Chemical mapping of a 177-nucleotide RNA with 2A3 and DMS.
[RMDB]
RNA sequence: GGGAACGACUCGAGUAGAGUCGAAAACAGCAAUUAUUCGUAAUUGCUGAAUGGCGGACCCAGCGCGGAAGGAGCGCGCAGGACUCGUUCGCCGCCUUUUAAUAAGCAGGUACUUCGGUACCUGCAACAGAAAGAUAUGAUUCGUCAUAUCUUUCUGAAAAGAAACAACAACAACAAC
Reactivity to 2A3 in 0.01 (KOAc 150mM, MgCl2 10mM, bicine 150mM(pH8.5), 24C), signal-to-noise 8, nucleotides 027 to 126: c000a000g000c000a010a000u010u020a020u070u150c170g050u060a020a010u010u000g000c000u000g000a030a070u080g000g000c000g000g000a000c010c000c010a010g000c000g000c010g030g060a240a180g120g100a120g170c010g000c000g000c010a010g000g030a050c060u050c270g000u010u010c000g000c000c000g040c010c000u190u240u070u100a220a240u190a160a030g000c000a000g000g000u010a000c000u030u110c210g060g000u000a000c010c000u000g000c000a000a000
Reactivity to DMS in 0.01 (KOAc 150mM, MgCl2 10mM, bicine 150mM(pH8.5), 24C), signal-to-noise 9, nucleotides 027 to 126: c010a010g000c000a000a000u000u000a020u000u010c200g020u000a000a000u000u000g010c000u000g000a030a070u010g020g010c000g010g000a040c010c010c010a080g030c000g010c000g000g010a140a120g020g010a150g010c010g020c010g020c010a050g000g000a210c110u000c280g000u000u000c010g000c000c000g000c030c010u000u010u010u010a070a120u010a090a130g010c000a010g000g010u000a000c000u000u010c150g030g010u000a000c000c000u000g000c000a020a040